Conditions: 150 mM KOAc, 10 mM MgCl2 and 150 mM bicine (pH 8.5), 24 C. Chemical mapping of a 177-nucleotide RNA with 2A3 and DMS. Values cover nucleotides 27 to 126. It was measured as part of the RMDB library TTRDEL. For DMS, 3,640 sequencing reads were counted.
RNA sequence: GGGAACGACUCGAGUAGAGUCGAAAAGAUAUGGACAACGGCAGCUGCAUGCGAGGUCGGAAACGACUACCCACCGCAUGAACUACAGCUGAAGUUGUCCUAAGUCAAACCGGGGUUCGCCCCGGAACAUAUGCUCCAGGUUCGCCUGGAGCAUAUGAAAAGAAACAACAACAACAAC
Reactivity to 2A3 in 0.01 (KOAc 150mM, MgCl2 10mM, bicine 150mM(pH8.5), 24C), signal-to-noise 2, nucleotides 027 to 126: g020a010u080a020u180g000g000a000c000a010a000c000g040g040c000a010g020c010u030g010c000a020u000g000c000g010a030g040g000u030c020g000g040a060a080a050c020g020a020c000u070a080c040c110c030a030c020c010g020c000a000u010g000a060a040c100u260a060c140a000g000c000u020g010a010a010g000u000u000g000u000c000c000u010a040a020g020u010c010a040a000a100c000c010g020g000g000g020u050u060c210g160c020c000c000c000g000g020a000a000
Reactivity to DMS in 0.01 (KOAc 150mM, MgCl2 10mM, bicine 150mM(pH8.5), 24C), signal-to-noise 4, nucleotides 027 to 126: g000a070u010a300u000g000g000a010c000a000a010c020g010g010c010a020g000c000u000g040c010a000u000g000c010g000a060g020g020u010c020g020g000a100a140a230c020g010a010c000u020a040c070c030c060a300c120c000g000c000a000u000g000a020a060c100u010a300c010a010g000c010u010g000a000a040g000u000u000g000u000c000c000u000a010a050g000u010c020a070a100a070c010c000g000g000g010g020u000u000c300g020c000c000c000c000g000g000a030a050